[RMDB]
RNA sequence: GGGAACGACUCGAGUAGAGUCGAAAAUCCUAAGUCCAUAUACUGGAGCACAACCAGGGUGCCCCGCGAGGGGAGCCCUGCUCGGAAACGAGCAGGGAACCUGGUUAGCUCCACUAUAUGGAUAUGGAAAAACGAAAAUUCUUCGGAAUUUUCGUAAGCAUAUACAUACUUUCGAGUAUGUAUAUGCAAAAGAAACAACAACAACAAC
Reactivity to 2A3 in 0.01 (KOAc 150mM, MgCl2 10mM, bicine 150mM(pH8.5), 24C), signal-to-noise 1, nucleotides 027 to 156: u030c020c000u050a070a030g040u000c000c000a000u000a000u000a000c020u000g010g000a000g000c020a060c070a270a020c000c010a010g000g020g090u080g060c010c040c000c020g020c060g020a120g000g040g010g000a010g020c010c010c000u010g000c010u020c000g000g060a090a140a080c010g000a010g040c010a000g000g000g000a000a030c000c000u000g050g000u000u000a000g000c050u000c000c010a000c000u010a000u000a000u000g000g000a000u000a000u000g000g000a090a090a050a020a000c010g040a000a090a000a000u100u000c030u040u070c160g110g000a000a000u010u000u000u000c000g000u020a080a030